RNA sequence: GGGAACGACUCGAGUAGAGUCGAAAAGGCUCAGAGUGAACGCUGGCGGCGUGCCUAAUACAUGCAAGUCGAACGAUGAAGCUUCUAGCUUGCUAGAAGUGAAUUAGUGGCGCACGGGUGAGUAAGGCCUAAUUACCCACUUCGGUGGGUAAUUAGGAAAAGAAACAACAACAACAAC
Reactivity to 2A3 in 0.01 (KOAc 150mM, MgCl2 10mM, bicine 150mM(pH8.5), 24C), signal-to-noise 7, nucleotides 027 to 126: g040g000c010u010c040a010g050a030g060u050g040a120a030c040g010c020u040g080g010c030g020g000c020g030u030g010c000c010u120a150a050u170a120c090a050u100g020c030a060a060g010u010c010g040a080a060c040g030a060u070g050a050a010g010c000u000u000c000u010a000g020c030u040u170g010c000u010a000g000a010a010g010u030g020a010a010u030u020a050g040u070g060g010c010g000c020a010c030g050g020g070u030g020a030g030u070a080a030g110g000
Reactivity to DMS in 0.01 (KOAc 150mM, MgCl2 10mM, bicine 150mM(pH8.5), 24C), signal-to-noise 5, nucleotides 027 to 126: g010g010c010u000c020a050g000a160g000u020g000a040a060c070g020c040u010g030g020c050g000g020c040g000u010g000c030c090u010a100a090u030a140c140a060u000g000c060a070a110g000u000c030g020a140a090c080g000a040u000g010a300a300g010c000u000u000c000u010a010g000c020u020u010g000c000u010a000g000a000a010g000u010g000a080a040u010u000a050g010u010g010g000c020g000c040a040c060g010g020g010u010g020a080g000u010a090a080g010g010